[RMDB]
RNA sequence: GGGAACGACUCGAGUAGAGUCGAAAAGGACUCCGUGAGGAGUCCGUGCACCGAGAGGUGCACAAGGGCGAAGUAUGUCUCGGUGCCCCUCCUCCUCGAUGUUGAGAGGAGGAGAGAUGUCGUCUCACGAUUUAUAGUGAGACUGACUUGAGACACGAUGUUACUUCUCAUUCGUGAGAAGUAACAUAAAAGAAACAACAACAACAAC
Reactivity to DMS in 0.01 (KOAc 150mM, MgCl2 10mM, bicine 150mM(pH8.5), 24C), signal-to-noise 3, nucleotides 027 to 156: g040g000a030c080u000c000c000g020u010g010a270g040g020a030g010u000c000c000g000u000g000c010a010c010c000g010a300g010a300g030g020u000g030c000a010c000a050a080g000g000g060c030g010a170a190g010u000a040u010g010u000c010u000c000g020g010u000g000c040c000c010c000u000c000c000u000c000c000u000c010g000a270u010g030u000u000g010a260g010a040g010g010a010g000g000a000g010a030g020a060u010g010u000c010g010u000c000u010c000a020c030g010a270u010u000u010a160u010a160g010u000g000a040g010a010c020u010g030a010c010u010u010g000a050g010a040c020a050c020g010
Reactivity to 2A3 in 0.01 (KOAc 150mM, MgCl2 10mM, bicine 150mM(pH8.5), 24C), signal-to-noise 2, nucleotides 027 to 156: g000g000a000c020u010c000c000g030u030g020a020g000g000a000g000u010c000c000g000u000g000c000a010c000c000g010a020g000a010g000g010u010g000c000a000c020a010a050g010g000g000c010g050a040a000g050u070a010u090g000u010c000u000c000g050g040u110g000c000c000c000c000u000c000c000u000c000c000u000c000g020a060u070g030u120u070g050a050g000a000g010g000a000g000g000a000g000a000g000a000u020g000u010c000g000u000c000u000c000a000c000g040a020u000u230u070a230u150a050g000u000g000a010g000a000c030u040g000a000c000u010u040g020a000g000a000c000a000c020g010
About this RNA: The record gives the reactivity of an RNA of 207 nucleotides to DMS and 2A3. For 2A3, 3,835 sequencing reads were counted. For 2A3 the reverse transcriptase was SuperScript II with manganese. The data come from the RNA Mapping Database (RMDB), library OK3TST.